The data come from the RNA Mapping Database (RMDB), library OK2TRN. Structure probing data (2A3 and DMS) for a 177-nucleotide construct. For 2A3 the reverse transcriptase was SuperScript II with manganese. Values cover nucleotides 27 to 126. For DMS the reverse transcriptase was MarathonRT.
RNA sequence: GGGAACGACUCGAGUAGAGUCGAAAAUUGUUCGGCUUAUUAUUUGUACUACAGUCUGAACUUUGCUAGGAUUCCCUAGAAUAUGAGUAGCAAACCUUCUAAUCAGUCCCAACUAAGGCAUGUGGUAGUAAGAACUCACUUUCGAGUGAGUUCUUACAAAAGAAACAACAACAACAAC
Reactivity to 2A3 in 0.01 (KOAc 150mM, MgCl2 10mM, bicine 150mM(pH8.5), 24C), signal-to-noise 2, nucleotides 027 to 126: u040u030g010u030u000c000g020g000c040u070u000a040u110u000a130u160u300u260g140u140a090c030u030a030c030a010g030u050c040u140g000a000a000c000u010u010u050g020c010u050a060g000g090a220u100u140c000c000c000u000a030g090a070a010u160a100u190g020a030g070u050a000g020c020a020a100a060c020c030u040u060c030u110a040a110u000c010a040g020u030c020c000c010a010a000c030u060a050a040g040g010c040a040u080g070u070g080g020u030a030
Reactivity to DMS in 0.01 (KOAc 150mM, MgCl2 10mM, bicine 150mM(pH8.5), 24C), signal-to-noise 2, nucleotides 027 to 126: u010u010g020u000u000c020g020g030c050u010u000a050u020u000a220u010u010u000g030u000a070c110u000a050c120a020g020u000c020u010g050a010a060c020u000u000u000g000c060u000a030g020g000a280u000u000c030c010c020u000a080g000a090a140u010a060u000g000a110g020u000a030g000c030a030a050a070c080c040u000u000c040u010a060a100u020c100a090g000u010c000c010c020a050a090c130u000a030a070g010g000c050a080u010g010u000g010g000u010a050